[RMDB]
RNA sequence: GGGAACGACUCGAGUAGAGUCGAAAAAAAAAGGAGGAGGAGAAAUAUAGAGAGAGAUCGGUCCUCCCACGCGGGUCUCUCUCUGAUAAGAGGAAUAAGAGGAUGAUUAAUAGAUAGCGCGCAAAAACCUUAAUAUUGUGUUCGCACAAUAUUAAGGAAAAGAAACAACAACAACAAC
Reactivity to 2A3 in 0.01 (KOAc 150mM, MgCl2 10mM, bicine 150mM(pH8.5), 24C), signal-to-noise 1, nucleotides 027 to 126: a000a000a000a000a020g050g010a030g000g000a000g030g030a020g040a060a150a020u170a050u160a090g000a010g000a010g000a000g010a010u000c050g050g040u000c010c020u000c000c020c000a020c010g120c010g090g000g000u000c000u000c010u000c000u020c000u000g000a000u030a110a050g050a010g060g020a030a030u060a090a000g020a000g030g010a030u030g020a010u030u190a070a110u020a070g090a030u100a020g080c040g000c000g010c040a000a010a000a120a200
Reactivity to DMS in 0.01 (KOAc 150mM, MgCl2 10mM, bicine 150mM(pH8.5), 24C), signal-to-noise 3, nucleotides 027 to 126: a020a030a050a110a040g010g000a020g000g000a050g010g000a110g000a090a060a090u000a080u000a030g000a040g010a020g000a020g010a000u000c000g000g010u000c040c070u000c000c000c010a070c300g000c010g000g010g000u000c000u000c010u000c010u000c010u000g000a050u000a040a040g000a050g010g000a050a030u010a050a070g010a080g000g010a030u020g000a070u000u010a040a070u010a070g020a070u000a030g020c050g010c060g010c110a040a050a050a070a050
Chemical mapping of a 177-nucleotide RNA with 2A3 and DMS. 2A3 adducts were read by reverse transcription with SuperScript II with manganese. High DMS reactivity at an A or C suggests that its Watson-Crick edge is free.